[RMDB]
An RNA of 177 nucleotides, treated with 2A3 and DMS and read out base by base.
DMS (dimethyl sulfate) methylates the pairing face of unpaired adenines and cytosines.
For 2A3 the reverse transcriptase was SuperScript II with manganese.
RNA sequence: GGGAACGACUCGAGUAGAGUCGAAAACAACUAUAACUUCACACCCGUUGGUGCACGCCGCGUGGCCGUUGUCCGCUCCGAUGGACGCGUCGUUGCGCGCUUACCCGCAUCGCGCGACUUUGCAGAAACUGGUGAAGUCAUUCGUGACUUCACCAGUAAAAGAAACAACAACAACAAC
Reactivity to 2A3 in 0.01 (KOAc 150mM, MgCl2 10mM, bicine 150mM(pH8.5), 24C), signal-to-noise 2, nucleotides 027 to 126: c010a050a000c030u160a060u100a300a100c080u140u000c030a040c040a020c030c020c000g050u030u190g080g060u010g030c000a000c060g040c030c000g050c020g050u080g040g000c010c000g050u060u130g030u000c020c000g020c010u030c040c040g120a100u130g010g010a020c000g000c010g020u060c030g040u020u030g000c010g000c000g010c000u020u050a080c020c010c000g000c000a010u020c000g000c010g000c010g050a080c000u110u080u180g010c030a010g040a190a140
Reactivity to DMS in 0.01 (KOAc 150mM, MgCl2 10mM, bicine 150mM(pH8.5), 24C), signal-to-noise 2, nucleotides 027 to 126: c070a090a130c120u000a110u000a030a080c070u010u000c080a070c040a140c040c010c070g020u000u030g040g000u000g000c030a050c110g020c070c020g020c080g030u000g000g010c040c030g050u000u010g010u000c020c030g010c150u020c100c100g020a080u000g000g010a080c040g000c010g020u000c110g010u000u000g000c020g010c020g000c120u000u000a090c030c070c010g030c080a110u020c030g020c030g020c010g000a030c050u000u010u000g000c070a090g000a120a060